[RMDB]
RNA sequence: GGGAACGACUCGAGUAGAGUCGAAAAAGAUGACAGGUUCACCCCGUACGGUGCGGAAGUUCGCGCUUCCGUGAAACGCGAAAAUCGGACGGUGGCUGCAAGUCGCAUCGCAAAACCGCGGCAAGUGUUAACCUGGACCUCUUCGGAGGUCCAGGAACAUCAUUGAAAACUUCGGUUUUCAAUGAUGAAAAGAAACAACAACAACAAC
Reactivity to 2A3 in 0.01 (KOAc 150mM, MgCl2 10mM, bicine 150mM(pH8.5), 24C), signal-to-noise 3, nucleotides 027 to 156: a010g080a090u100g020a020c050a080g040g010u160u190c020a040c020c000c000c030g020u020a020c050g010g040u050g000c000g000g010a010a010g020u100u200c060g040c010g000c110u000u000c010c000g030u020g000a100a090a010c090g000c010g110a060a000a000a060u070c010g000g020a020c080g080g030u070g030g000c030u030g030c060a120a040g020u010c010g000c050a030u050c030g040c060a050a070a020a050c030c050g020c010g030g000c070a120a090g050u010g040u210u160a110a070c000c000u000g000g000a000c000c010u010c000u070u050c140g090g000a010g000g000u000c010c000a000g000g000a000a000
Reactivity to DMS in 0.01 (KOAc 150mM, MgCl2 10mM, bicine 150mM(pH8.5), 24C), signal-to-noise 1, nucleotides 027 to 156: a120g000a130u000g010a180c000a100g030g030u010u000c030a070c020c000c030c000g020u000a050c030g020g010u000g000c030g010g000a030a080g010u000u000c200g000c300g000c000u010u000c010c040g060u000g000a040a070a040c010g000c090g000a050a070a090a080u010c070g010g010a050c000g010g040u000g000g010c050u000g010c060a070a080g010u000c080g000c020a100u000c080g040c050a060a060a050a080c020c040g070c020g000g010c060a100a130g010u010g010u000u000a080a100c010c010u000g010g020a050c010c000u000c000u000u000c300g010g000a020g030g020u010c000c010a030g020g010a030a070